The record gives the reactivity of an RNA of 177 nucleotides to 2A3 and DMS. For 2A3, 60,639 sequencing reads were counted. Source: RMDB library OK1LIB, as collected in RNAgym.
[RMDB]
RNA sequence: GGGAACGACUCGAGUAGAGUCGAAAACUUCGUGAACAAGCGACGAUGCAUUAGGUCCUUCGUUAUCUAACCGAAACAUCGUUACUAGUGUUUGAAUAAAUCAAGAUAGGCAGGCUAUCAUAGAAAGAAGUAGUGUGUUAUUCGUAGCACGCUGCUUAAAAGAAACAACAACAACAAC
Reactivity to 2A3 in 0.01 (KOAc 150mM, MgCl2 10mM, bicine 150mM(pH8.5), 24C), signal-to-noise 6, nucleotides 027 to 126: c010u010u010c010g030u020g020a000a010c010a000a000g010c000g010a000c000g000a000u010g000c010a010u030u040a010g000g000u020c040c000u140u150c070g080u070u100a080u030c050u070a010a030c020c000g000a010a000a010c000a000u000c000g000u000u010a010c010u020a030g070u010g030u030u020u000g040a040a020u120a030a060a030u120c050a010a010g010a010u000a000g010g040c040a000g020g000c000u000a010u000c010a010u020a030g080a000a090a010g050
Reactivity to DMS in 0.01 (KOAc 150mM, MgCl2 10mM, bicine 150mM(pH8.5), 24C), signal-to-noise 9, nucleotides 027 to 126: c060u000u000c000g000u000g000a000a000c000a000a000g000c010g000a000c000g000a000u000g000c000a000u020u010a200g000g000u000c110c110u020u020c150g010u020u020a080u030c120u020a100a030c020c010g000a230a130a140c030a000u000c010g010u000u000a110c020u010a070g010u010g010u010u000u000g000a080a080u030a060a060a080u030c080a090a070g000a020u010a020g000g010c150a080g010g000c010u000a020u000c020a080u030a100g010a070a090a080g010